[RMDB]
RNA sequence: GGGAACGACUCGAGUAGAGUCGAAAAGCGGUUUGCACAAUCGGCAAGCCUUUCUCACUCGCUUUGAAGCGGUAAGGCAGAUGAGGAUAACGCUGAUUGAUGUCUUGCAGUGAACGUCCAAGCAGAACAUUAGUACGCAUUUCGAUGCGUACUAAUGAAAAGAAACAACAACAACAAC
Reactivity to DMS in 0.01 (KOAc 150mM, MgCl2 10mM, bicine 150mM(pH8.5), 24C), signal-to-noise 9, nucleotides 027 to 126: g010c090g010g020u000u000u010g020c020a110c070a070a060u010c110g010g010c020a090a140g010c070c070u000u000u000c010u000c030a140c080u000c150g010c020u010u010u010g010a130a090g010c060g010g000u000a050a040g010g010c100a030g000a120u000g010a060g010g010a070u000a070a130c190g010c010u000g000a060u000u000g000a100u000g010u010c060u000u000g010c040a050g020u000g010a060a100c130g000u000c030c030a090a110g000c120a100g010a090a170
Reactivity to 2A3 in 0.01 (KOAc 150mM, MgCl2 10mM, bicine 150mM(pH8.5), 24C), signal-to-noise 8, nucleotides 027 to 126: g040c030g000g030u020u040u040g010c030a030c040a140a140u100c050g020g000c020a050a060g000c000c000u000u030u000c000u000c000a030c010u070c030g050c020u110u110u230g130a150a030g040c040g020g030u100a060a060g060g010c050a010g020a170u070g030a040g060g020a040u050a130a060c090g000c050u010g000a040u020u060g100a140u020g050u030c020u030u030g000c010a050g010u020g130a110a030c050g040u020c020c010a050a010g040c040a040g050a140a010